[RMDB]
RNA sequence: GGGAACGACUCGAGUAGAGUCGAAAAGAUAUGGACGAAUAUACUCGCGGUACGCAAUAGGCAACUACAUCGGAAACGAUGUAGUCUUGCCUAUUGCGUACCGAACUACGAGUAUUCGUCCUAAGUCGAGAGAUUACAGGUUCGCCUGUAAUCUCUCAAAAGAAACAACAACAACAAC
Reactivity to DMS in 0.01 (KOAc 150mM, MgCl2 10mM, bicine 150mM(pH8.5), 24C), signal-to-noise 2, nucleotides 027 to 126: g010a130u010a300u000g000g000a010c000g020a060a010u000a170u010a090c020u000c000g010c000g000g000u000a000c000g000c000a020a000u000a010g000g020c010a020a050c000u000a020c010a000u000c000g040g000a180a130a260c010g040a010u000g010u000a010g010u000c060u010u000g010c010c000u000a000u000u010g000c020g000u000a000c010c000g010a000a010c160u000a300c020g020a020g000u000a010u000u010c030g000u000c000c000u000a010a120g010u000c090
This 177-nucleotide RNA was probed chemically with DMS. The data come from the RNA Mapping Database (RMDB), library TTRINS. Reactivities are given for positions 27 through 126.